[RMDB]
RNA sequence: GGGAACGACUCGAGUAGAGUCGAAAAGCUCUGCGAGACAGAUCGAACAACAAAGAGAGAUCGAAAAUCUUAGAGGAGAGAACGAAUCUUUCGACUUCACUAGGACAUUGUCGAUCAGAGGUCCAAAGACCAUGGAUGGGUUCGCCUAUCUAUGGUCAAAAGAAACAACAACAACAAC
Reactivity to 2A3 in 0.01 (KOAc 150mM, MgCl2 10mM, bicine 150mM(pH8.5), 24C), signal-to-noise 9, nucleotides 027 to 126: g020c000u000c000u000g010c030g020a030g000a020c010a020g020a020u010c020g050a070a060c040a070a020c040a030a300a010g120a010g010a000g010a010u010c010g040a050a050a020a060u000c000u010u010a020g010a040g040g010a010g000a010g030a070a030c020g030a050a060u130c100u040u010u010c040g080a150c020u010u000c010a010c030u010a010g010g010a010c020a120u080u150g030u010c000g000a010u020c000a000g010a010g020g030u000c000c000a040a030a030
Reactivity to DMS in 0.01 (KOAc 150mM, MgCl2 10mM, bicine 150mM(pH8.5), 24C), signal-to-noise 9, nucleotides 027 to 126: g010c010u000c000u000g000c050g010a300g000a020c030a070g010a020u000c010g000a250a230c070a070a090c290a080a160a080g010a070g000a300g000a010u000c000g000a080a070a100a200u000c010u000u000a020g000a040g010g000a010g000a220g010a080a080c060g010a040a100u040c140u010u000u000c000g000a100c010u000u000c010a090c010u000a010g000g000a020c100a100u020u010g010u000c010g010a180u010c010a020g010a040g000g010u020c010c020a080a100a090
Structure probing data (2A3 and DMS) for a 177-nucleotide construct. Source: RMDB library OK1LIB, as collected in RNAgym. For DMS, 49,059 sequencing reads were counted.